Chemical mapping of a 177-nucleotide RNA with DMS and 2A3.
For DMS the reverse transcriptase was MarathonRT.
The data come from the RNA Mapping Database (RMDB), library OK2TST.
RNA sequence: GGGAACGACUCGAGUAGAGUCGAAAAAUGGAAAAAUUUACUAGUUACUCAGAACAAUUCGUCUAUCUUUGUCAAAUCUAUCAUCUUUACUUAAUUGCGAUGUCUGAAUCCAAGCAAAUUACUAGUGGCAACUACACUUAUUCGUAAGUGUAGUUGCAAAAGAAACAACAACAACAAC
Reactivity to DMS in 0.01 (KOAc 150mM, MgCl2 10mM, bicine 150mM(pH8.5), 24C), signal-to-noise 2, nucleotides 027 to 126: a060u010g000g000a010a070a060a100a100u000u000u000a020c020u010a050g000u000u000a090c110u000c050a030g020a070a090c110a060a090u020u000c030g040u010c080u000a030u000c200u000u000u020g010u000c100a060a020a030u000c160u000a100u010c130a040u000c140u000u000u000a060c030u000u000a040a050u000u010g000c070g030a050u000g010u000c000u010g020a050a080u020c090c050a060a100g000c100a020a020a070u000u000a060c040u000a030g020u000g010
Reactivity to 2A3 in 0.01 (KOAc 150mM, MgCl2 10mM, bicine 150mM(pH8.5), 24C), signal-to-noise 3, nucleotides 027 to 126: a000u060g020g060a050a080a050a100a130u210u280u180a080c010u020a020g010u010u020a030c010u000c050a010g030a120a040c040a140a220u130u020c020g080u000c070u080a060u000c080u030u070u070g010u040c050a010a010a090u020c050u170a140u150c120a020u050c030u110u090u040a050c020u040u100a060a050u050u030g010c020g020a020u020g030u000c010u000g020a030a010u000c020c020a040a020g040c030a060a060a170u100u030a050c020u010a010g020u010g040
2A3 adducts were read by reverse transcription with SuperScript II with manganese. For 2A3, 2,129 sequencing reads were counted.